The data come from the RNA Mapping Database (RMDB), library 15KLIB. The record gives the reactivity of an RNA of 170 nucleotides to DMS and 2A3. The DMS profile rests on 43,727 reads. For DMS the reverse transcriptase was MarathonRT.
RNA sequence: GGGAACGACUCGAGUAGAGUCGAAAACCCUCCCCGUCCUUCCCUUUUCUGAUUAUUCCGACGAUGUUCCCCAGCCAGGGAUUUUCUUCCUCGAGUUUCUUGAUGGUCUUCCUGGUCUUCCGGAGAUGUACUUUCACGUUCGCGUGAAAGAAAAGAAACAACAACAACAAC
Reactivity to DMS in 0.01 (KOAc 150mM, MgCl2 10mM, bicine 150mM(pH8.5), 24C), signal-to-noise 5, nucleotides 027 to 129: c000c000c000u020c020c010c010c010g030u000c040c000u020u000c010c000c000u000u000u000u000c050u000g020a140u000u000a040u050u020c040c040g030a140c170g000a110u070g030u040u010c020c010c000c050a170g000c060c040a120g000g010g010a080u010u010u030u030c060u000u050c000c030u000c110g030a120g000u000u000u000c050u000u000g010a100u060g020g030u030c070u020u040c010c000u010g010g030u020c020u000u000c070c060g000g000a050g000a070u060g020u050a100
Reactivity to 2A3 in 0.01 (KOAc 150mM, MgCl2 10mM, bicine 150mM(pH8.5), 24C), signal-to-noise 6, nucleotides 027 to 129: c000c000c000u000c000c010c000c000g030u040c010c000u030u040c000c000c000u050u020u020u060c020u040g060a070u030u150a050u080u060c020c010g010a060c040g030a070u180g040u040u020c000c000c000c000a000g010c020c010a010g010g000g010a010u070u020u060u010c020u070u010c000c000u020c030g050a060g050u020u080u050c030u020u040g050a080u090g040g010u030c010u040u030c020c020u040g000g040u070c030u120u050c030c010g070g000a070g000a050u070g020u060a050